[RMDB]
RNA sequence: GGGAACGACUCGAGUAGAGUCGAAAAAUGAAUUGGUAAAAGGGAUGCUAGAAAUUCAACUGAAGAAAAAAAGCAAGUCAAGUACGUAUUCAGCAUUAAAGAUGAAUCUCAGAAGUCAUGGUUCAAUGUUGACACUGUGAGGAUAACAACUAGAGAAACCCUACUACCAGUUCGCUGGUAGUAGGGUAAAAGAAACAACAACAACAAC
Reactivity to DMS in 0.01 (KOAc 150mM, MgCl2 10mM, bicine 150mM(pH8.5), 24C), signal-to-noise 2, nucleotides 027 to 156: a170u000g020a090a070u000u000g030g000u000a030a070a110a060g000g020g040a130u000g030c040u000a060g010a110a060a130u000u000c020a110a120c040u000g010a070a090g040a010a000a020a070a050a060a180g000c070a070a110g050u000c010a060a070g030u010a040c020g010u000a110u010u000c000a020g020c020a070u000u010a090a030a120g010a150u020g000a040a060u000c030u000c030a120g000a090a120g000u000c030a080u000g030g070u010u010c000a030a060u020g000u000u000g000a090c090a020c070u000g020u000g010a070g020g000a110u000a040a080c080a050a060c090u010a110g010a120g020a130a150
Reactivity to 2A3 in 0.01 (KOAc 150mM, MgCl2 10mM, bicine 150mM(pH8.5), 24C), signal-to-noise 3, nucleotides 027 to 156: a000u080g030a010a030u060u050g040g020u070a040a030a080a090g020g000g010a020u040g030c020u010a030g080a080a220a090u090u090c040a140a090c070u110g060a080a040g100a090a140a010a000a010a000a000g020c040a020a000g010u060c030a040a030g030u040a040c020g010u020a050u050u070c020a010g020c030a040u060u160a090a070a030g060a040u120g010a030a050u050c060u010c100a050g030a100a020g050u040c020a020u040g070g000u040u030c030a060a060u140g030u080u020g030a010c020a010c080u020g010u020g040a010g000g020a000u070a040a040c080a020a030c060u070a030g070a000g010a230a050